Description
The data come from the RNA Mapping Database (RMDB), library OK3TST. Chemical mapping of a 207-nucleotide RNA with 2A3. The reactions ran in a buffer of 150 mM KOAc, 10 mM MgCl2 and 150 mM bicine (pH 8.5), at 24 C.
[RMDB]
RNA sequence: GGGAACGACUCGAGUAGAGUCGAAAAGGCCCGCGCGCCCGUGGUCACAGUGGAAGAGGCGCCCGCGCUGCGCUGCCCGGAGGAGCCGUCGCGCGCCCGCUUCCUGUUCGGCUGGUUCCUGCCAGCUCGAGGACAAAACACGCGUGCGCGCGGCGGGCUGUUCAGACUCUUUCGAGAGUCUGAACAGAAAAGAAACAACAACAACAAC
Reactivity to 2A3 in 0.01 (KOAc 150mM, MgCl2 10mM, bicine 150mM(pH8.5), 24C), signal-to-noise 1, nucleotides 027 to 156: g050g030c050c040c000g030c010g010c010g000c010c050c000g030u040g060g050u110c100a050c050a190g140u160g000g030a090a060g040a130g020g030c030g000c000c000c010g050c010g020c040u060g000c050g020c030u060g020c010c010c040g070g050a100g080g030a020g020c010c000g030u030c020g000c010g020c000g000c020c040c000g050c000u070u010c010c010u050g060u050u020c010g010g000c010u000g010g060u150u290c080c060u150g000c000c000a020g000c060u100c120g050a050g000g010a030c070a010a120a040a000c100a020c040g000c010g020u040g000c010g000c000g000c000g000g010c010g000g010g020
Background:
For 2A3, 819 sequencing reads were counted.